[RMDB]
RNA sequence: GGGAACGACUCGAGUAGAGUCGAAAAUGGUGCCCGUUCGCGGGCACCACCUCGUGGUUAGGGCCACGUUAUAUAGUUGCUUAAGCCCUAAGCGUUGAUAAAGAUGCGCGAAAUUCGUUUCGCGCAACGUAGCGGAUCAGUUCGCUGAUCCGCUACGAAAAGAAACAACAACAACAAC
Reactivity to DMS in 0.01 (KOAc 150mM, MgCl2 10mM, bicine 150mM(pH8.5), 24C), signal-to-noise 1, nucleotides 027 to 126: u020g000g010u000g010c000c000c010g050u000u000c180g030c000g080g010g000c000a000c000c010a040c030c000u000c020g010u000g000g000u000u000a040g000g010g020c000c000a130c140g000u010u000a030u040a070u010a180g010u030u020g010c050u000u000a080a190g020c000c010c000u000a020a050g010c070g000u020u030g020a080u000a040a080a170g010a140u010g000c000g040c000g020a020a000a030u000u000c230g010u000u000u000c000g010c000g000c040a000a040
An RNA of 177 nucleotides, treated with DMS and read out base by base. In probing experiments dimethyl sulfate is read out at A N1 and C N3, which are open when not base-paired. Source: RMDB library M2PK50, as collected in RNAgym. Values are in units of 0.01, from 0 to 300, in steps of 10. DMS adducts were read by reverse transcription with MarathonRT. The DMS profile rests on 881 reads.